[RMDB]
RNA sequence: GGGAACGACUCGAGUAGAGUCGAAAACCCACGUGGUUCGCCACGUGGGAAAUAAAUUCAGCGGUAAUUCGAGGCGAAAUAUUACCGCUGAUGGCCUCGAAAAAAGUACACAGUUCGCUGUGUACAAGACACCAUCUUAGUUCGCUAAGAUGGUGUCAAAAGAAACAACAACAACAAC
Reactivity to DMS in 0.01 (KOAc 150mM, MgCl2 10mM, bicine 150mM(pH8.5), 24C), signal-to-noise 3, nucleotides 027 to 126: c000c000c000a010c000g040u000g000g030u000u010c200g020c010c000a000c000g030u010g000g000g000a010a010a040u000a050a100a080u000u000c000a000g020c000g010g010u000a000a010u000u010c160g010a150g010g000c080g010a070a080a100u010a070u010u010a000c000c000g010c000u000g000a000u000g000g020c030c000u000c150g040a010a050a050a070a110a080g010u000a000c010a000c000a000g010u000u010c210g010c000u010g010u000g010u000a010c000a050a050
Reactivity to 2A3 in 0.01 (KOAc 150mM, MgCl2 10mM, bicine 150mM(pH8.5), 24C), signal-to-noise 5, nucleotides 027 to 126: c000c000c000a000c010g000u000g010g070u040u050c190g030c080c000a000c020g000u010g010g010g000a010a070a000u120a000a100a030u050u010c000a000g000c010g000g000u010a020a020u070u100c110g080a100g160g140c120g040a090a070a030u240a020u020u010a010c000c000g000c000u000g000a000u000g020g010c000c020u060c040g050a100a080a010a030a020a020g010u000a000c000a000c000a010g020u050u070c140g050c110u000g000u000g000u000a000c000a000a000